RNA sequence: GGGAACGACUCGAGUAGAGUCGAAAAUUCGACAUCAAACACCGGAGAGCUUUCUUCUUCCAUAAGUUGCACUACGGUUUUAUCUGCAACUAAUUCGCCAUUUUUGAUAAUGGCAAUGCGGUCACAAUCACCAGUAUCAGUUCGCUGAUACUGGUGAAAAAGAAACAACAACAACAAC
Reactivity to DMS in 0.01 (KOAc 150mM, MgCl2 10mM, bicine 150mM(pH8.5), 24C), signal-to-noise 3, nucleotides 027 to 126: u010u010c050g010a040c070a060u000c090a070a080a100c170a060c030c030g000g000a050g020a050g000c070u010u010u030c020u000u000c020u010u010c060c090a050u050a120a030g000u010u010g030c020a070c100u010a040c130g020g020u000u020u060u050a100u020c120u010g040c040a030a040c040u010a110a150u030u000c120g010c000c000a000u000u000u000u040u050g000a040u020a000a000u020g000g000c000a000a010u020g020c050g010g010u000c090a090c130a100a180
Reactivity to 2A3 in 0.01 (KOAc 150mM, MgCl2 10mM, bicine 150mM(pH8.5), 24C), signal-to-noise 8, nucleotides 027 to 126: u110u060c030g050a030c050a100u110c080a110a090a050c030a020c050c010g040g000a030g000a010g030c020u080u100u080c010u060u040c010u150u070c070c000a090u110a170a040g020u010u030g000c020a020c070u130a090c150g110g040u080u050u090u110a080u040c030u030g000c010a010a030c010u050a090a150u100u100c030g010c000c000a000u030u010u000u040u160g190a220u150a170a010u000g000g010c000a010a010u070g000c020g020g010u070c040a030c040a170a120